[RMDB]
RNA sequence: GGGAACGACUCGAGUAGAGUCGAAAACGCGUUAUAGAUCUCCUGGGGCCAGAAGUUGUUAUUGACAAUACAUUUGAUAGAAAAGUCAUAGCAGACAAAGUUUUUGGUAAUUUAGAUCUGCUGCAAGCUGAUCUUCUCCUUUCGAGGAGAAGAUCAGAAAAGAAACAACAACAACAAC
Reactivity to 2A3 in 0.01 (KOAc 150mM, MgCl2 10mM, bicine 150mM(pH8.5), 24C), signal-to-noise 1, nucleotides 027 to 126: c010g060c000g030u000u050a190u080a220g020a020u020c030u010c070c040u030g000g000g180g000c010c020a000g030a030a000g010u040u000g030u000u070a010u020u180g020a000c000a000a050u100a140c010a100u120u150u060g120a080u060a120g100a040a150a020a000g030u010c010a010u040a040g000c010a000g030a160c070a020a050a050g060u000u030u030u100u150g040g170u040a000a000u060u070u070a060g020a120u000c000u080g000c040u000g000c020a040a000g040
Reactivity to DMS in 0.01 (KOAc 150mM, MgCl2 10mM, bicine 150mM(pH8.5), 24C), signal-to-noise 3, nucleotides 027 to 126: c100g020c130g030u020u000a120u000a130g030a080u010c070u010c040c010u020g030g020g020g010c030c030a070g010a070a090g010u000u010g000u000u000a050u010u010g010a070c050a090a090u000a140c110a110u000u010u010g010a060u000a100g000a040a080a110a130g000u010c020a040u000a060g020c010a010g000a050c040a120a070a060g010u000u000u010u010u000g010g010u010a030a030u000u010u000a100g000a150u000c010u000g000c040u000g010c200a040a160g010